[RMDB]
RNA sequence: GGGAACGACUCGAGUAGAGUCGAAAACGCGCUACGCCAGUUCGGCCCGGCCACGGCUGACGCCCCCCGUCCCAUCGAUUCCUGGUCGCCGGUCCAAGCCGACGAUCGCGGUGGUGACCCUGGAAGGGAUGAUACUUCCAUUCGUGGAAGUAUCAUCAAAAGAAACAACAACAACAAC
Reactivity to DMS in 0.01 (KOAc 150mM, MgCl2 10mM, bicine 150mM(pH8.5), 24C), signal-to-noise 8, nucleotides 027 to 126: c120g020c060g010c040u000a060c080g010c020c030a090g020u000u000c070g020g010c020c060c070g010g000c040c070a060c100g010g000c020u000g000a080c050g010c010c010c000c010c010c030g000u010c020c010c010a040u000c020g000a170u000u000c130c070u000g020g010u000c000g020c010c010g000g000u000c130c250a080a180g010c000c000g000a010c000g000a010u000c010g010c020g010g010u000g010g010u000g000a040c020c060c050u000g010g010a140a130g010g010
Reactivity to 2A3 in 0.01 (KOAc 150mM, MgCl2 10mM, bicine 150mM(pH8.5), 24C), signal-to-noise 4, nucleotides 027 to 126: c030g030c000g010c050u100a020c030g000c010c000a050g010u090u110c030g040g000c040c050c000g100g020c030c010a040c030g020g030c020u040g020a050c040g040c010c000c000c010c030c020g000u020c010c000c000a020u020c010g030a050u100u180c010c010u040g000g000u000c010g000c000c000g000g030u020c080c020a050a040g020c000c000g010a030c010g010a010u020c020g000c010g010g010u020g010g050u130g000a010c030c020c010u040g060g070a110a080g150g060

Chemical mapping of a 177-nucleotide RNA with DMS and 2A3. Reactivities are given for positions 27 through 126. DMS adducts were read by reverse transcription with MarathonRT. For DMS, 14,746 sequencing reads were counted. For 2A3 the reverse transcriptase was SuperScript II with manganese. In probing experiments dimethyl sulfate is read out at A N1 and C N3, which are open when not base-paired. The RNA was probed in 150 mM KOAc, 10 mM MgCl2 and 150 mM bicine (pH 8.5) at 24 C.